[RMDB]
RNA sequence: GGGAACGACUCGAGUAGAGUCGAAAACAUUACGAAUUCAGGCGCAAAUUGUAGAAUUAGCUACUCUACGAUUUAGUGAGCGUUAGUAACGUUGUAAUAUAAUAUAGUCUUUGGAAGGAUUAUAUUGGAGCCGCGGACAAGUUCGCUUGUCCGCGAACCGAAAGCAUUAGUUCGCUAAUGCUUUCGGAAAAGAAACAACAACAACAAC
Reactivity to 2A3 in 0.01 (KOAc 150mM, MgCl2 10mM, bicine 150mM(pH8.5), 24C), signal-to-noise 2, nucleotides 027 to 156: c010a050u090u130a030c030g080a140a110u160u170c070a070g110g000c030g010c040a000a000a010u010u010g000u000a010g010a010a030u080u030a050g010c040u050a000c000u000c000u010a000c010g000a000u000u000u070a100g030u110g080a030g060c010g030u030u030a030g030u040a100a010c080g000u000u000g020u060a090a120u090a120u040a120a010u020a000u000a010g000u000c010u100u100u140g180g020a150a040g010g000a000u010u000a010u010a010u020u020g050g060a070g070c120c010g000c010g000g010a010c000a000a000g000u070u080c070g060c130u000u000g000u020c000c000g020c000g000a000a000
This 207-nucleotide RNA was probed chemically with 2A3. For 2A3, 1,156 sequencing reads were counted.